RNA sequence: GGGAACGACUCGAGUAGAGUCGAAAAGGAUCCUCUAACAGGAUUGUCUCUGUGUUCCGAAACUCCAACAGUAUUGCUUCGGGACACCUACAGCAAUACUGUAGGUAUAGAGAGUAGUAGAGGAUCGGUAGCAGUAGGCUUUCGAGCCUACUGCUACAAAAGAAACAACAACAACAAC
Reactivity to 2A3 in 0.01 (KOAc 150mM, MgCl2 10mM, bicine 150mM(pH8.5), 24C), signal-to-noise 1, nucleotides 027 to 126: g140g010a000u010c010c000u000c000u060a150a120c050a090g210g100a180u190u170g160u000c000u020c010u010g070u010g030u060u010c000c000g010a050a020a010c050u140c070c020a090a110c000a150g120u110a120u010u230g010c010u000u010c020g060g000g000a040c010a020c040c000u000a000c010a010g060c040a060a090u000a300c000u020g000u000a000g000g000u080a020u240a020g060a000g000a000g030u070a040g000u000a000g010a020g000g000a000u000c010g020
Reactivity to DMS in 0.01 (KOAc 150mM, MgCl2 10mM, bicine 150mM(pH8.5), 24C), signal-to-noise 2, nucleotides 027 to 126: g020g000a000u000c010c000u000c020u000a040a120c090a110g010g000a130u010u010g060u010c010u000c000u010g040u000g010u010u000c050c040g010a020a000a060c030u020c180c060a060a150c270a100g000u000a280u000u000g000c080u000u000c110g000g000g020a060c140a050c010c010u000a020c100a020g000c060a070a130u000a300c010u000g000u000a010g000g010u000a080u000a010g000a000g000a090g000u030a040g020u000a010g040a010g010g010a000u000c000g010

The data come from the RNA Mapping Database (RMDB), library OK2TRN. The record gives the reactivity of an RNA of 177 nucleotides to 2A3 and DMS. The reactions ran in a buffer of 150 mM KOAc, 10 mM MgCl2 and 150 mM bicine (pH 8.5), at 24 C. Reactivities are rounded to 0.1 and cut off at 0 and 3. For DMS, 1,054 sequencing reads were counted.